[RMDB]
RNA sequence: GGGAACGACUCGAGUAGAGUCGAAAAAUGGGACACAUUUCCCGUUCUGAGCUUAGAGGAGGUUGUCUAACUAAAACUUGACUUCGUUGUUGAUUUUAUAGACACUUAAACCCCCAAGCAGAGUACCUGAGUGUGGUUCUUUCUUAAGAGUGAACACCCGAUGUAUUAUAUUCGUAUAAUACAUCGGAAAAGAAACAACAACAACAAC
Reactivity to DMS in 0.01 (KOAc 150mM, MgCl2 10mM, bicine 150mM(pH8.5), 24C), signal-to-noise 2, nucleotides 027 to 156: a050u010g000g000g020a050c100a090c100a140u000u000u010c010c000c020g000u000u000c010u000g010a180g000c030u010u000a030g010a090g010g010a090g030g020u000u010g040u010c020u000a070a200c200u000a030a010a070a030c030u000u010g020a060c060u000u000c260g010u000u010g020u000u000g010a080u000u000u000u000a090u010a100g020a100c020a020c070u010u000a110a130a200c010c010c000c020c000a000a070g030c050a100g020a130g020u010a020c040c010u000g010a120g010u000g030u000g020g010u000u000c040u000u000u000c060u000u000a070a120g020a130g020u010g000a100a100c040a130c130
Reactivity to 2A3 in 0.01 (KOAc 150mM, MgCl2 10mM, bicine 150mM(pH8.5), 24C), signal-to-noise 2, nucleotides 027 to 156: a000u060g000g020g000a020c030a010c030a230u030u070u050c030c000c000g020u050u000c020u040g100a050g010c000u040u080a080g020a100g110g010a080g020g020u080u060g000u030c020u040a060a080c020u020a020a060a020a080c020u030u060g000a000c010u080u010c240g190u170u100g030u020u010g010a090u010u050u000u000a100u080a040g010a010c010a020c040u050u070a150a110a090c000c010c020c000c040a000a000g020c010a000g030a010g050u060a070c020c050u090g100a040g070u090g000u040g070g000u000u050c000u060u060u020c000u020u070a080a060g080a090g090u090g100a070a000c010a030c130